[RMDB]
Chemical mapping of a 207-nucleotide RNA with 2A3 and DMS. The reactions ran in a buffer of 150 mM KOAc, 10 mM MgCl2 and 150 mM bicine (pH 8.5), at 24 C. 2A3 adducts were read by reverse transcription with SuperScript II with manganese.
RNA sequence: GGGAACGACUCGAGUAGAGUCGAAAAUUUCUUCUAGACUGUAAGAGACUCAUUCAUCUUGUCAGUGGGCUUUAUCCAGAGCUUAACACAGUGUUCAGCCCCAAGCUAAUGUACAUGAAGUAACUCAAAAACAAGGGAGAGAGAAGUAGGGAGGGAAUAAUUAGCAUAGCUUCGGCUAUGCUAAUUAAAAAGAAACAACAACAACAAC
Reactivity to 2A3 in 0.01 (KOAc 150mM, MgCl2 10mM, bicine 150mM(pH8.5), 24C), signal-to-noise 3, nucleotides 027 to 156: u020u010u000c020u000u000c000u020a050g010a060c030u020g040u100a060a020g050a020g050a100c050u030c040a040u220u050c030a070u050c050u090u080g070u090c050a080g020u180g020g000g000c020u040u150u120a080u170c060c050a060g000a010g050c030u070u080a140a020c030a020c050a130g040u060g040u180u110c000a010g010c020c000c010c010a020a020g000c010u060a080a030u050g040u070a050c030a090u060g010a040a030g030u030a070a060c040u050c110a030a040a020a040a060c030a020a030g000g050g000a040g000a000g020a010g020a060a000g010u040a020g010g020g020a010g000g000g000a050a080
Reactivity to DMS in 0.01 (KOAc 150mM, MgCl2 10mM, bicine 150mM(pH8.5), 24C), signal-to-noise 2, nucleotides 027 to 156: u010u000u000c030u010u010c020u000a070g020a110c070u040g010u010a110a130g000a080g020a080c030u010c060a100u000u000c040a090u000c050u000u000g020u000c030a140g040u010g000g020g020c050u000u000u000a060u020c120c120a160g020a040g030c030u000u000a070a120c100a180c050a120g000u000g020u000u000c100a090g010c040c010c020c030a080a140g040c040u000a080a080u000g020u010a050c080a060u010g000a030a100g010u000a060a050c070u040c050a060a070a060a040a030c070a020a060g000g000g000a060g010a150g010a060g020a050a060g020u000a020g020g010g020a110g020g000g000a040a080